Structure probing data (2A3) for a 207-nucleotide construct. Reactivities are given for positions 27 through 156. For 2A3, 400 sequencing reads were counted. The reactions ran in a buffer of 150 mM KOAc, 10 mM MgCl2 and 150 mM bicine (pH 8.5), at 24 C.
RNA sequence: GGGAACGACUCGAGUAGAGUCGAAAAUUUCUAUGUAUGUGGGGCAAAAUAUUACAUCCACAACACAGAACCAAACGUGGUGAUGACACUGUUGUGACACUGUUGCAUGCUGACACAAAACCUCACAGCAUCUAGUCCAAAUCUUUGCUUCACUAUACUAUCCACGGCAUUUCGAUGCCGUGGAUAGAAAAGAAACAACAACAACAAC
Reactivity to 2A3 in 0.01 (KOAc 150mM, MgCl2 10mM, bicine 150mM(pH8.5), 24C), signal-to-noise 1, nucleotides 027 to 156: u040u040u010c030u000a100u090g140u000a060u170g030u010g000g010g000g000c020a050a010a070a030u130a110u090u080a050c140a030u130c070c000a000c000a040a000c060a000c000a000g070a050a000c050c040a010a230a220c190g160u190g040g000u050g000a050u010g000a050c040a080c240u060g000u000u010g020u010g000a040c050a040c210u020g150u200u120g060c050a000u040g060c080u010g070a050c000a010c030a300a170a130a130c080c060u070c000a050c000a030g040c000a000u000c070u160a000g040u000c020c080a090a160a050u000c050u050u000u000g000c060u000u000c020a000c030u100a090u050a190